Record summary: This 170-nucleotide RNA was probed chemically with 2A3 and DMS. The 2A3 profile rests on 73,212 reads. The DMS profile rests on 85,133 reads. Conditions: 150 mM KOAc, 10 mM MgCl2 and 150 mM bicine (pH 8.5), 24 C. The data come from the RNA Mapping Database (RMDB), library 15KLIB. For 2A3 the reverse transcriptase was SuperScript II with manganese.
[RMDB]
RNA sequence: GGGAACGACUCGAGUAGAGUCGAAAAGAACUGCUGGGUUCCCCUGAUGUCCAGUCCCUCCCCGUUCCUGGAGAAGGGAGACUCGGGAACGCCUAGCAUCUGAGGGACGAAGCCGCCCCCGGGCGCUAACCUCCUGAGUUCGCUCAGGAGAAAAGAAACAACAACAACAAC
Reactivity to 2A3 in 0.01 (KOAc 150mM, MgCl2 10mM, bicine 150mM(pH8.5), 24C), signal-to-noise 9, nucleotides 027 to 129: g030a070a040c070u040g010c000u010g010g030g000u030u060c030c010c000c010u070g070a090u220g090u030c030c030a020g050u010c010c000c000u020c010c010c000c010g070u100u060c020c030u100g070g020a090g020a110a080g050g010g010a040g010a010c010u010c010g000g010g010a020a010c040g050c010c010u020a020g010c010a030u030c040u050g030a120g010g030g020a010c040g050a080a020g030c030c010g030c000c010c000c010c000g010g020g000c030g000c040u040a050a060c010
Reactivity to DMS in 0.01 (KOAc 150mM, MgCl2 10mM, bicine 150mM(pH8.5), 24C), signal-to-noise 9, nucleotides 027 to 129: g000a070a140c090u030g020c020u010g000g000g000u020u030c100c030c030c070u000g000a100u070g020u000c000c110a060g030u020c000c000c000u000c020c030c020c010g010u010u010c050c030u010g000g020a100g030a090a060g000g030g020a050g010a030c020u020c000g000g010g010a040a050c080g010c050c030u030a030g010c030a020u010c040u020g010a090g010g020g000a040c050g000a100a080g040c090c030g010c030c020c010c010c030g000g010g000c060g000c080u010a030a110c120